[RMDB]
The record gives the reactivity of an RNA of 177 nucleotides to DMS. The reactions ran in a buffer of 150 mM KOAc, 10 mM MgCl2 and 150 mM bicine (pH 8.5), at 24 C. The DMS profile rests on 1,261 reads. Source: RMDB library 15KREP, as collected in RNAgym.

RNA sequence: GGGAACGACUCGAGUAGAGUCGAAAACUCUUGUUCUCGAGGGCCUUCCUUCUGCGGUGAUCCUCCCUCUCCUUGUCGGUGAACCCGCUCUUGUGAGGCCUCUUCAUAGGUCCGGAGUCGACCUCCACAGGACAGUAUUGUUCGCAAUACUGUCCUGAAAAGAAACAACAACAACAAC
Reactivity to DMS in 0.01 (KOAc 150mM, MgCl2 10mM, bicine 150mM(pH8.5), 24C), signal-to-noise 1, nucleotides 027 to 126: c060u000c010u000u010g010u020u010c020u000c030g010a090g020g030g020c040c060u010u000c050c010u010u000c070u000g010c070g020g040u010g000a120u000c030c020u020c050c040c010u000c060u020c060c050u000u010g020u000c080g000g020u020g020a050a140c180c010c010g020c040u000c040u000u010g030u000g020a110g040g000c020c030u010c080u000u000c120a130u000a040g000g010u000c020c040g030g000a060g010u010c020g000a120c070c010u000c010c040a270